[RMDB]
RNA sequence: GGGAACGACUCGAGUAGAGUCGAAAACAAAUACCGUUCGCGGUAUUUGAAAUACGGAAACCUUCGUGCCGUCAGAAGUUAAGAGGUGCAUGCUCUCGUUAAAAAUCAGCUGAUUCGUCAGCUGAAACUACACACUGGAGUUCGCUCCAGUGUGUAGAAAAGAAACAACAACAACAAC
Reactivity to 2A3 in 0.01 (KOAc 150mM, MgCl2 10mM, bicine 150mM(pH8.5), 24C), signal-to-noise 2, nucleotides 027 to 126: c010a010a000a000u010a000c010c010g020u040u040c230g030c000g100g010u010a000u000u020u020g020a020a010a010u140a030c040g070g000a020a060a090c000c000u080u080c030g060u040g020c010c000g080u050c040a080g020a200a040g140u080u160a160a030g010a030g060g050u050g030c020a010u060g000c010u000c000u000c040g030u030u060a050a120a030a010a050u020c020a000g010c000u010g000a040u050u070c170g050u000c040a010g000c010u000g000a000a000a000
Reactivity to DMS in 0.01 (KOAc 150mM, MgCl2 10mM, bicine 150mM(pH8.5), 24C), signal-to-noise 2, nucleotides 027 to 126: c000a000a010a020u000a010c000c000g040u000u010c210g060c020g010g000u000a000u020u000u000g000a070a060a060u000a060c080g000g000a100a070a060c060c030u000u010c050g010u000g000c010c020g020u000c110a090g020a070a090g030u000u020a100a060g010a070g030g020u000g000c050a050u000g000c070u000c040u000c030g000u010u010a000a050a070a120a110u010c010a010g010c000u010g010a020u000u010c170g010u000c000a000g000c010u000g000a000a030a070
The record gives the reactivity of an RNA of 177 nucleotides to 2A3 and DMS. High DMS reactivity at an A or C suggests that its Watson-Crick edge is free. Reactivities are given for positions 27 through 126. For 2A3, 2,336 sequencing reads were counted. The data come from the RNA Mapping Database (RMDB), library M2PK50. Conditions: 150 mM KOAc, 10 mM MgCl2 and 150 mM bicine (pH 8.5), 24 C.